[RMDB]
RNA sequence: GGGAACGACUCGAGUAGAGUCGAAAAAAAGAUAUGGACCCACUACCCACCUCUUAAAUAUACCGAGGAUCUAGUAUCGGAAACGAUACUAGGGAGGUAUAUGAGAGAGGUGGGUCCUAAGUCAAAACGACGUGUAUACGUUCGCGUAUACACGUCGAAAAGAAACAACAACAACAAC
Reactivity to DMS in 0.01 (KOAc 150mM, MgCl2 10mM, bicine 150mM(pH8.5), 24C), signal-to-noise 1, nucleotides 027 to 126: a090a060a080g010a120u000a200u000g000g020a160c020c000c000a150c300u000a160c000c000c010a230c010c000u000c000u000u010a020a240a000u000a010u000a000c000c010g020a010g040g000a000u010c000u000a000g020u000a020u010c010g000g000a140a110a200c020g060a020u010a000c000u010a000g010g000g000a000g000g010u000a000u000a000u010g000a300g060a040g010a020g000g060u000g000g010g000u000c040c010u020a110a230g040u000c060a040a080a130a250
Chemical mapping of a 177-nucleotide RNA with DMS. The data come from the RNA Mapping Database (RMDB), library TTRDES. Reactivities are rounded to 0.1 and cut off at 0 and 3. DMS adducts were read by reverse transcription with MarathonRT. In probing experiments dimethyl sulfate is read out at A N1 and C N3, which are open when not base-paired. The RNA was probed in 150 mM KOAc, 10 mM MgCl2 and 150 mM bicine (pH 8.5) at 24 C.